[RMDB]
RNA sequence: GGGAACGACUCGAGUAGAGUCGAAAAUAAGCAGGCAAUUAAGACCUGGCUGGAGCAUGCUAAUCAGACCAUUCACCCCUAGGCCUCUAAUUCCUGGCUCUCUUAGCUCUCCAACAGUCCGUGUAGCCUCCACCUAGUACUUCGGUACUAGGUGGAGAAAAGAAACAACAACAACAAC
Reactivity to DMS in 0.01 (KOAc 150mM, MgCl2 10mM, bicine 150mM(pH8.5), 24C), signal-to-noise 1, nucleotides 027 to 126: u000a060a090g020c050a060g020g080c020a060a070u010u010a130a170g000a040c030c030u010g010g000c050u000g010g010a060g000c180a010u000g000c050u020a050a040u000c090a020g010a050c020c030a100u010u050c100a300c120c020c030c020u000a030g000g000c060c020u010c100u000a070a150u020u010c010c050u010g010g000c050u000c030u020c040u010u000a020g000c060u000c030u010c010c010a020a060c170a070g000u000c000c090g010u000g010u010a140g000c050
Structure probing data (DMS) for a 177-nucleotide construct. For DMS the reverse transcriptase was MarathonRT. For DMS, 826 sequencing reads were counted.